RNA sequence: GGGAACGACUCGAGUAGAGUCGAAAAAUUCCGAGGAUGUUUCCCAGCCAGGGAUUUUCGUCCUCGAGUUUCUUGAUGGUUCUCCUGCUCUUCCGGAGCUUUCUUUCGAGGUCUUCCGCGUCUUUUCCAAGUGCGUGGUUCGCCACGCACAAAAGAAACAACAACAACAAC
Reactivity to DMS in 0.01 (KOAc 150mM, MgCl2 10mM, bicine 150mM(pH8.5), 24C), signal-to-noise 4, nucleotides 027 to 129: a040u040u020c070c020g020a030g020g020a050u000g010u060u050u020c020c050c000a200g020c300c230a060g000g000g000a030u000u000u000u000c040g010u010c000c000u030c020g010a070g010u010u010u020c040u010u070g020a000u050g030g020u020u040c030u060c010c100u040g010c070u000c050u000u000c140c120g000g030a130g030c110u000u000u000c040u000u040u010c040g010a090g060g010u030c050u050u000c040c000g000c080g040u000c020u000u000u000u000c020c040a090a070
Reactivity to 2A3 in 0.01 (KOAc 150mM, MgCl2 10mM, bicine 150mM(pH8.5), 24C), signal-to-noise 4, nucleotides 027 to 129: a010u090u040c050c000g000a040g020g000a000u030g040u020u000u000c010c000c020a010g130c120c100a140g000g020g010a000u070u050u020u190c020g020u000c000c000u000c000g000a020g000u030u040u000c040u040u080g070a120u100g070g000u060u020c010u000c000c010u040g020c020u050c000u060u020c060c070g050g000a040g000c000u010u060u020c000u010u050u020c020g020a030g030g060u000c020u030u010c000c000g030c040g050u000c000u000u040u020u000c000c020a090a020